[RMDB]
RNA sequence: GGGAACGACUCGAGUAGAGUCGAAAAUCAUCAAGGCCACGGCAAUAGAGUUUUGCCAUCCCUUCCAGCGUCAUAUGUUCCCGUAACAUCUGCAGGGACAUGGUUUUACCUUCCCGGACGCACCAGAGUAGUGUCUAUCAUUCGUGAUAGACACUACAAAAGAAACAACAACAACAAC
Reactivity to DMS in 0.01 (KOAc 150mM, MgCl2 10mM, bicine 150mM(pH8.5), 24C), signal-to-noise 7, nucleotides 027 to 126: u010c040a090u010c110a070a090g000g000c080c070a070c130g020g000c020a040a030u000a130g010a150g010u010u000u000u010g010c010c020a170u000c070c010c020u000u010c120c070a100g020c060g010u000c020a140u000a050u000g000u000u000c010c020c030g020u010a050a120c210a100u000c120u000g020c060a070g010g000g000a030c150a040u000g000g010u000u010u010u000a100c100c140u000u000c010c000c000g000g020a060c050g010c050a100c130c080a090g000a300
Reactivity to 2A3 in 0.01 (KOAc 150mM, MgCl2 10mM, bicine 150mM(pH8.5), 24C), signal-to-noise 6, nucleotides 027 to 126: u070c010a010u030c040a020a060g050g000c050c040a020c050g010g000c010a020a030u060a080g300a090g160u050u050u040u080g000c010c000a020u060c010c000c000u030u050c050c040a020g000c010g020u020c030a040u040a030u180g030u040u030c010c020c020g020u040a040a060c040a200u090c070u160g040c050a050g000g000g020a010c020a050u050g010g020u020u070u060u150a080c010c010u020u020c010c010c000g030g010a010c030g030c020a020c020c040a020g060a010